[RMDB]
An RNA of 207 nucleotides, treated with 2A3 and read out base by base. It was measured as part of the RMDB library M2RFPK.
RNA sequence: GGGAACGACUCGAGUAGAGUCGAAAAGAAAUAAAGAACCCUUCCCGCGGGGCUGGAUCUUCCAGAUGGUGCGGGCCGGGACAAGCCGGAGAGUGUCCCGGUUUCAGAAACAACCUUCGGCAGCCAAACUAGACUACCCACUUCGGUGGGUAGUCAACGAAUUAUUACGGUUCGCCGUAAUAAUUCGAAAAGAAACAACAACAACAAC
Reactivity to 2A3 in 0.01 (KOAc 150mM, MgCl2 10mM, bicine 150mM(pH8.5), 24C), signal-to-noise 2, nucleotides 027 to 156: g000a000a010a020u200a070a150a050g090a160a140c030c000c000u010u010c000c000c010g000c000g010g000g000g000c010u010g000g010a110u140c070u210u060c150c010a000g000a010u020g060g090u040g000c000g010g000g000c000c000g000g000g000a000c000a000a000g010c000c000g000g000a000g000a000g010u010g000u000c000c000c010g010g000u000u040u030c030a030g050a010a020a020c050a030a020c020c000u000u000c000g020g000c010a050g050c070c050a040a100a130c090u120a070g000a000c000u020a000c000c000c010a010c010u060u030c180g050g020u000g000g000g000u000a000g000u000c000a000a000
About this RNA: Conditions: 150 mM KOAc, 10 mM MgCl2 and 150 mM bicine (pH 8.5), 24 C.